[RMDB]
RNA sequence: GGGAACGACUCGAGUAGAGUCGAAAACGAUCGCGGCGGGCCCCUACGCGAGCCGGUCCUCCCACUCCUCGGCGGUCAUCGACUCGCCGGUGACGCCGUCGGGCCCCUGCGCCGCGAGCAGGGCGGCAGCUAGGAUCUGUUUCGACAGAUCCUAGCUAAAAGAAACAACAACAACAAC
Reactivity to DMS in 0.01 (KOAc 150mM, MgCl2 10mM, bicine 150mM(pH8.5), 24C), signal-to-noise 2, nucleotides 027 to 126: c130g010a080u000c030g010c030g020g020c020g020g030g000c020c020c020c050u000a060c140g000c030g000a060g010c070c000g000g010u010c030c070u020c030c030c010a210c130u000c030c040u010c010g010g000c010g020g010u010c010a050u000c050g020a130c080u010c090g010c110c000g030g010u000g000a050c070g010c020c010g000u020c130g020g020g030c050c020c000c060u010g020c040g000c000c000g000c020g000a080g000c100a060g000g020g010c040g020g000c050
Chemical mapping of a 177-nucleotide RNA with DMS. DMS adducts were read by reverse transcription with MarathonRT. Source: RMDB library OK2TRN, as collected in RNAgym. For DMS, 1,970 sequencing reads were counted.